This 177-nucleotide RNA was probed chemically with 2A3 and DMS. The RNA was probed in 150 mM KOAc, 10 mM MgCl2 and 150 mM bicine (pH 8.5) at 24 C.
[RMDB]
RNA sequence: GGGAACGACUCGAGUAGAGUCGAAAAGUAAGUCCAUUGGGAAAUCGACCAGCUCAACUGGUCGGCGUCCGGUGGAAACUACCACCAGGCUUGGGGCCGAGAGACUCAAACGGGUACGUCCGGGGUACAUAACGGAUUACUUCGGUAAUCCGUUAUGAAAAGAAACAACAACAACAAC
Reactivity to 2A3 in 0.01 (KOAc 150mM, MgCl2 10mM, bicine 150mM(pH8.5), 24C), signal-to-noise 2, nucleotides 027 to 126: g020u010a020a020g020u000c010c000a000u010u070g300g000g000a000a010a050u020c000g000a000c010c000a010g050c080u110c220a100a220c060u000g000g000u000c010g020g010c010g020u000c010c000g000g010u020g010g000a040a010a000c000u000a000c020c020a040c030c060a050g030g000c030u130u220g160g010g170g000c010c050g050a070g000a000g010a030c010u000c020a030a090a070c020g020g000g020u070a030c020g020u000c010c010g010g000g000g010u040a040
Reactivity to DMS in 0.01 (KOAc 150mM, MgCl2 10mM, bicine 150mM(pH8.5), 24C), signal-to-noise 3, nucleotides 027 to 126: g010u000a010a060g000u000c010c000a000u000u000g050g040g000a010a020a020u000c000g000a010c000c010a010g000c160u020c300a140a220c020u000g000g000u000c000g000g000c300g000u000c000c000g010g010u010g000g000a030a040a040c030u000a050c000c040a020c110c170a210g000g010c030u010u020g000g020g020g020c020c020g000a090g000a170g000a040c000u000c020a020a090a130c010g000g000g010u000a010c030g010u000c010c010g010g000g000g030u010a210

Overview:
Source: RMDB library RFMREP, as collected in RNAgym. Reactivities are given for positions 27 through 126. DMS adducts were read by reverse transcription with MarathonRT. 2A3 is a SHAPE reagent: it acylates the 2'-hydroxyl of flexible nucleotides of all four kinds.